[RMDB]
RNA sequence: GGGAACGACUCGAGUAGAGUCGAAAAGACAGCCGUGAACAAUCCGGUGACUCUCUUCGGCGAAGAGAUUGAUGAGAUUCGGAGCAAAUUGGAUGGUCAAUUCCGGGCGUAUAUGGAAGCCUUGACCCGUCUCUAAAUAAUUCGUUAUUUAGAGACGAAAAGAAACAACAACAACAAC
Reactivity to 2A3 in 0.01 (KOAc 150mM, MgCl2 10mM, bicine 150mM(pH8.5), 24C), signal-to-noise 8, nucleotides 027 to 126: g030a010c020a020g010c010c010g070u080g070a090a060c040a070a090u040c010c010g020g040u030g040a050c010u000c000u000c000u060u050c030g180g010c080g030a050a020g040a020g010a040u030u170g090a100u100g040a050g010a080u070u060c030g020g020a040g020c040a020a110a200u160u110g060g010a030u050g040g000u030c010a040a100u160u020c030c000g010g010g020c060g030u090a090u020a030u210g090g020a050a020g010c010c000u020u050g020a030c000c010
Reactivity to DMS in 0.01 (KOAc 150mM, MgCl2 10mM, bicine 150mM(pH8.5), 24C), signal-to-noise 9, nucleotides 027 to 126: g010a060c050a140g010c010c010g020u000g010a080a080c110a100a160u010c040c020g010g000u000g010a080c150u000c110u000c010u000u000c130g010g010c080g010a180a100g000a030g010a060u000u000g010a120u010g000a190g000a080u000u000c030g010g010a300g010c070a040a070a100u000u010g000g010a060u000g010g000u000c020a050a160u000u010c040c030g000g000g010c130g010u000a050u000a050u010g000g010a060a080g010c030c020u000u000g000a130c050c020
Structure probing data (2A3 and DMS) for a 177-nucleotide construct. 2A3 adducts were read by reverse transcription with SuperScript II with manganese.